RNA sequence: GGGAACGACUCGAGUAGAGUCGAAAAGCCGAGGAGGUAGGGCUUACGCUUGCGUUUGUCUGUUAUAUCUUGGUGGACGAGUAGUCGCGGUUGGGACUGAGGUGCCUACAACGUGUUUUUGAGUGGGCGUCCGUAUCCCUUUCGAGGGAUACGGACGAAAAGAAACAACAACAACAAC
Reactivity to DMS in 0.01 (KOAc 150mM, MgCl2 10mM, bicine 150mM(pH8.5), 24C), signal-to-noise 1, nucleotides 027 to 126: g010c010c030g010a090g030g020a030g000g000u020a040g000g000g000c030u000u010a070c050g000c050u040u000g060c090g000u000u010u020g000u020c000u000g000u030u010a070u020a030u030c030u030u020g100g000u000g000g030a120c070g000a010g000u000a070g000u000c070g060c050g000g000u010u040g050g000g010a020c050u100g020a070g000g000u000g040c000c000u010a000c060a070a130c150g000u040g000u000u000u000u000u000g000a230g080u040g000g000g000
Reactivity to 2A3 in 0.01 (KOAc 150mM, MgCl2 10mM, bicine 150mM(pH8.5), 24C), signal-to-noise 1, nucleotides 027 to 126: g020c000c000g040a000g040g020a120g000g050u140a030g080g000g000c020u080u020a000c020g010c010u090u080g030c080g090u060u040u020g000u050c000u000g230u200u000a160u020a020u290c020u010u040g050g000u000g030g030a000c020g000a040g120u030a000g000u030c030g000c010g080g130u070u050g050g000g000a050c040u020g000a030g050g010u030g000c000c000u000a020c040a070a020c000g100u090g020u050u080u000u000u050g030a050g020u020g000g000g010
An RNA of 177 nucleotides, treated with DMS and 2A3 and read out base by base. For 2A3 the reverse transcriptase was SuperScript II with manganese. For 2A3, 420 sequencing reads were counted. Conditions: 150 mM KOAc, 10 mM MgCl2 and 150 mM bicine (pH 8.5), 24 C. Reactivities are rounded to 0.1 and cut off at 0 and 3. Source: RMDB library RFM100, as collected in RNAgym.